[RMDB]
An RNA of 177 nucleotides, treated with DMS and 2A3 and read out base by base. The data come from the RNA Mapping Database (RMDB), libraries RFM100 and RFMREP. The RNA was probed in 150 mM KOAc, 10 mM MgCl2 and 150 mM bicine (pH 8.5) at 24 C. DMS adducts were read by reverse transcription with MarathonRT. Reactivities are given for positions 27 through 126.
RNA sequence: GGGAACGACUCGAGUAGAGUCGAAAAGUAGCAGCGGGCCCGUGAAAUCUGCUGUGAAUCUGUCGGGACCACCCGAUAAGCCUGAAUACUCCCUGGUGACCGAUAGCGGACUAGUACCGUGAGGGAAAACCUACAGUUCAUUCGUGAACUGUAGGUUAAAAGAAACAACAACAACAAC
Reactivity to DMS in 0.01 (KOAc 150mM, MgCl2 10mM, bicine 150mM(pH8.5), 24C), signal-to-noise 7, nucleotides 027 to 126: g010u010a140g010c020a010g000c020g000g010g000c030c040c080g030u020g000a040a090a130u010c020u000g020c010u000g020u000g000a090a130u030c050u000g010u000c020g010g000g000a150c240c300a100c020c010c040g010a030u010a050a100g010c040c030u000g000a120a060u030a110c100u000c000c010c010u010g000g010u010g000a180c060c020g000a110u030a170g000c050g000g020a070c060u020a070g010u020a060c020c010g010u000g010a150g000g010g000a080a040
Reactivity to 2A3 in 0.01 (KOAc 150mM, MgCl2 10mM, bicine 150mM(pH8.5), 24C), signal-to-noise 6, nucleotides 027 to 126: g010u020a000g000c000a000g000c020g010g030g030c040c050c080g150u140g110a060a070a020u040c020u030g000c010u000g000u020g010a000a040u070c060u060g040u010c000g010g000g060a150c040c070a230c040c030c000g000a000u040a090a010g030c000c000u030g020a040a040u080a090c020u040c020c000c000u030g060g040u060g050a080c010c030g070a080u100a060g070c000g010g040a060c050u070a030g030u050a070c010c010g030u040g030a080g000g030g000a040a150